[RMDB]
RNA sequence: GGGAACGACUCGAGUAGAGUCGAAAACUUUAGCUACAGACGUAGUGCCUGAUAUAUAGACGGCUGAACUAGAGGUGUUUACCAGUGUGAUUGUGGCUACGGUUCCUGGUAACCAGAUGACGGGUCGAAUGAUAAUCCCCAAUUGAUUCAUCUGGCGGCAUCUCUAGGAAUUCGUUCCUAGAGAUGCAAAAGAAACAACAACAACAAC
Reactivity to DMS in 0.01 (KOAc 150mM, MgCl2 10mM, bicine 150mM(pH8.5), 24C), signal-to-noise 1, nucleotides 027 to 156: c010u000u000u000a020g000c010u000a130c020a000g010a030c070g020u000a150g050u000g050c070c030u000g000a250u010a130u010a120u000a100g010a110c060g000g020c040u010g020a080a040c050u020a030g000a040g010g000u020g020u030u020u010a180c040c030a150g030u000g010u000g010a110u000u000g020u000g000g000c030u020a070c300g030g000u000u000c000c010u020g000g000u000a160a030c020c010a040g020a010u010g000a050c080g020g060g000u000c040g020a140a140u000g000a150u010a070a120u010c010c000c040c020a080a220u020u000g030a150u000u000c020a010u000c000u000g010g020c050g030
Reactivity to 2A3 in 0.01 (KOAc 150mM, MgCl2 10mM, bicine 150mM(pH8.5), 24C), signal-to-noise 2, nucleotides 027 to 156: c000u080u060u050a010g000c010u010a000c020a090g060a110c030g100u120a050g080u030g110c000c000u040g030a040u060a060u060a020u050a240g110a050c060g100g010c030u060g060a030a040c040u040a030g060a070g160g050u060g050u020u170u090a020c000c010a060g020u020g010u010g190a240u060u050g010u040g060g000c030u020a020c030g040g000u030u000c000c000u010g010g090u100a080a010c000c000a000g000a000u000g000a030c030g020g040g010u040c050g060a060a110u100g170a020u070a160a070u040c010c000c010c000a010a090u120u190g040a090u120u030c010a000u000c000u000g000g000c010g000